Chemical mapping of a 207-nucleotide RNA with DMS and 2A3.
It was measured as part of the RMDB library M2RFPK.
The RNA was probed in 150 mM KOAc, 10 mM MgCl2 and 150 mM bicine (pH 8.5) at 24 C.
The DMS profile rests on 3,297 reads.
RNA sequence: GGGAACGACUCGAGUAGAGUCGAAAAAGAGGAGGCUUGGUUUUGCGAUCUUUAAGCAGAUGGCAGGUUCACCCCGUACGGUGCGGAAGUUCGCGCUUCCGUGAAACGCGAAAAUCGGACGGUGGCUAAGACCAAUAACAGUUCGCUGUUAUUGGAACAUGUAAGAGCUCUUCGGAGCUCUUACAUGAAAAGAAACAACAACAACAAC
Reactivity to DMS in 0.01 (KOAc 150mM, MgCl2 10mM, bicine 150mM(pH8.5), 24C), signal-to-noise 1, nucleotides 027 to 156: a080g000a110g000g000a060g020g030c020u010u000g010g030u010u010u000u000g010c020g010a060u010c040u000u010u010a070a090g030c060a060g010a110u010g000g030c060a060g000g020u000u000c080a030c030c000c000c010g000u000a020c000g010g030u000g020c020g020g000a040a050g010u000u000c180g010c300g030c010u000u000c060c100g020u000g010a030a040a050c040g010c040g010a010a040a110a070u000c030g000g000a060c020g000g000u000g030g010c030u010a050a110g010a140c010c000a010a010u000a000a020c030a020g010u000u000c290g040c000u010g030u000u010a000u020u000g010g000a020a090
Reactivity to 2A3 in 0.01 (KOAc 150mM, MgCl2 10mM, bicine 150mM(pH8.5), 24C), signal-to-noise 2, nucleotides 027 to 156: a010g050a010g010g010a010g000g010c030u040u030g010g050u030u070u100u060g020c020g020a050u020c030u080u170u120a080a030g040c000a020g020a080u040g030g040c040a030g030g000u060u090c030a050c010c010c000c000g000u030a020c030g020g030u030g020c010g010g000a010a010g010u100u190c070g030c010g000c090u000u010c000c000g000u000g000a090a070a010c120g030c020g060a070a070a000a080u050c010g030g010a010c010g000g050u080g010g000c010u050a090a020g040a060c000c000a000a000u010a000a000c000a000g040u050u080c160g040c110u000g010u000u000a000u000u000g000g000a000a020